RNA sequence: GGGAACGACUCGAGUAGAGUCGAAAAUGUCCUUGCUCAAGUGCUGGGAUUGUGUGCCAACGGCUAUGAUAGAUAUGAAUAGAGCACGAGAUAAUGUGCUUACAGAAAGUUGGUUGAAUUGAAUGCACAACCUCAGGUUGUUCGCAACCUGAGGUUGAAAAGAAACAACAACAACAAC
Reactivity to DMS in 0.01 (KOAc 150mM, MgCl2 10mM, bicine 150mM(pH8.5), 24C), signal-to-noise 2, nucleotides 027 to 126: u040g000u020c000c010u000u010g000c060u010c140a140a110g010u030g010c000u000g010g020g040a020u000u010g030u030g040u000g000c010c010a020a050c020g010g000c100u000a050u020g020a130u000a060g020a180u040a100u010g000a120a110u010a130g000a000g010c030a000c000g010a140g020a180u030a030a100u020g000u000g010c000u010u010a130c140a040g000a060a040a140g000u000u000g000g010u020u000g030a050a130u030u000g010a090a080u010g000c120a100
Reactivity to 2A3 in 0.01 (KOAc 150mM, MgCl2 10mM, bicine 150mM(pH8.5), 24C), signal-to-noise 3, nucleotides 027 to 126: u120g000u020c000c010u030u040g000c010u040c080a110a080g050u030g030c000u000g020g030g020a040u070u150g040u020g000u070g080c000c000a030a000c000g080g000c090u060a050u090g060a100u110a180g110a050u100a030u250g180a110a030u110a140g010a000g000c010a000c010g070a110g000a090u200a040a080u150g000u000g020c000u050u060a010c000a030g230a070a090a010g000u050u020g020g040u020u020g000a050a040u020u040g030a030a000u130g030c020a000
Chemical mapping of a 177-nucleotide RNA with DMS and 2A3. DMS adducts were read by reverse transcription with MarathonRT. For 2A3, 1,833 sequencing reads were counted. 2A3 adducts were read by reverse transcription with SuperScript II with manganese. The reactions ran in a buffer of 150 mM KOAc, 10 mM MgCl2 and 150 mM bicine (pH 8.5), at 24 C.